This 177-nucleotide RNA was probed chemically with 2A3 and DMS. For 2A3 the reverse transcriptase was SuperScript II with manganese. 2A3 is a SHAPE reagent: it acylates the 2'-hydroxyl of flexible nucleotides of all four kinds. DMS adducts were read by reverse transcription with MarathonRT. It was measured as part of the RMDB library OK2TST.

RNA sequence: GGGAACGACUCGAGUAGAGUCGAAAAAACCGGACUCCGGUGCUAUGGACCCAAGGCGCAUACGGGCACAACAAUAGUACGUUUACGUCGUAAUAACAACAUCUUCCCGAGAUGCAGUAUCACCCAACACGGAGUGAGGAUUCGUCCUCACUCCGUGAAAAGAAACAACAACAACAAC
Reactivity to 2A3 in 0.01 (KOAc 150mM, MgCl2 10mM, bicine 150mM(pH8.5), 24C), signal-to-noise 1, nucleotides 027 to 126: a000a000c120c030g010g090a140c100u090c030c000g020g020u020g030c030u030a040u080g040g000a040c000c020c020a030a050g090g000c030g000c000a000u030a090c030g000g010g000c020a020c020a090a030c040a070a080u030a100g080u110a050c110g010u080u090u010a040c050g040u060c010g040u080a040a060u090a130a090c100a000a030c000a020u040c010u030u070c040c050c010g060a060g000a020u050g000c000a000g030u040a030u100c030a020c040c000c000a080a000
Reactivity to DMS in 0.01 (KOAc 150mM, MgCl2 10mM, bicine 150mM(pH8.5), 24C), signal-to-noise 1, nucleotides 027 to 126: a050a080c020c000g000g000a180c070u010c030c030g010g000u000g000c090u000a050u000g000g000a130c030c000c030a100a080g010g020c070g000c040a050u020a050c080g000g000g010c040a020c060a090a020c100a120a060u010a060g020u000a090c060g020u020u000u000a030c110g000u000c090g030u020a080a010u000a060a080c060a100a090c050a070u000c060u000u000c060c000c000g010a130g010a050u000g030c020a130g000u000a050u020c170a130c020c060c010a070a280